[RMDB]
RNA sequence: GGGAACGACUCGAGUAGAGUCGAAAAUUAAAUGUGAAAAAAAAGAUCCUUCUAAGUCGUACCUCUGAAGGAGAAAAUGAAGUGAGCUAGCAUUGGCCGCAUGCGCUAACGCAUAUCGCAGAGGGUCUGACCGAUAAUAUUUCGAUAUUAUCGGUCAAAAAGAAACAACAACAACAAC
Reactivity to 2A3 in 0.01 (KOAc 150mM, MgCl2 10mM, bicine 150mM(pH8.5), 24C), signal-to-noise 7, nucleotides 027 to 126: u140u100a040a060a080u180g040u120g120a080a030a030a000a000a010a020a040g070a060u020c010c000u020u020c040u090a070a080g060u080c060g100u140a100c020c010u030c060u070g030a040a020g080g030a010g050a010a110a020a030u160g040a080a050g090u060g060a030g030c030u060a000g020c050a090u020u130g020g000c020c010g050c030a010u020g010c020g000c080u050a120a050c060g030c080a040u060a020u150c030g000c030a010g000a020g010g030g010u010c040
Reactivity to DMS in 0.01 (KOAc 150mM, MgCl2 10mM, bicine 150mM(pH8.5), 24C), signal-to-noise 8, nucleotides 027 to 126: u030u050a050a070a070u020g010u010g000a010a000a000a080a090a070a120a110g000a090u000c000c000u000u000c020u000a100a070g020u000c100g010u020a100c120c010u010c120u020g000a050a040g000g010a040g010a030a040a070a050u010g000a080a070g010u000g010a060g010c060u010a090g010c040a040u000u010g010g010c030c010g000c100a120u010g010c030g010c100u010a050a060c120g000c070a060u000a060u020c030g020c030a040g000a090g000g000g000u010c070